[RMDB]
RNA sequence: GGGAACGACUCGAGUAGAGUCGAAAACGGGGGAUGCUUUGAACUGAGCGUGGAGGAGGCAGGCAGCAUGUGGUCUUGAGGCUGAGAAUGUCAGCACCAGAGGCCACCACCAAGACCUGCGUGGUGGCUUCCGAAGGAUAUUCGUAUCCUUCGGAAGAAAAGAAACAACAACAACAAC
Reactivity to DMS in 0.01 (KOAc 150mM, MgCl2 10mM, bicine 150mM(pH8.5), 24C), signal-to-noise 9, nucleotides 027 to 126: c100g010g010g000g000g010a100u010g010c050u000u000u010g010a100a100c150u010g000a060g020c060g030u000g010g010a110g000g000a100g010g020c040a030g010g010c070a080g010c100a070u010g020u000g010g010u000c020u000u000g010a200g010g010c010u000g000a060g010a100a110u010g010u000c010a030g010c030a060c050c070a200g010a060g010g000c000c000a010c010c060a040c050c040a060a110g010a140c180c050u000g000c110g020u000g000g010u000g000g000
Reactivity to 2A3 in 0.01 (KOAc 150mM, MgCl2 10mM, bicine 150mM(pH8.5), 24C), signal-to-noise 8, nucleotides 027 to 126: c020g020g000g000g010g010a020u070g010c040u110u080u140g080a130a080c080u060g010a010g040c040g020u060g030g030a090g030g010a040g020g020c020a010g020g000c010a010g010c020a050u130g030u030g030g000u010c000u020u070g040a060g040g000c020u010g020a010g090a240a160u230g100u150c000a000g010c030a060c030c020a020g030a030g130g000c000c000a000c000c000a010c010c020a050a050g080a130c010c020u020g000c040g020u020g000g030u050g010g000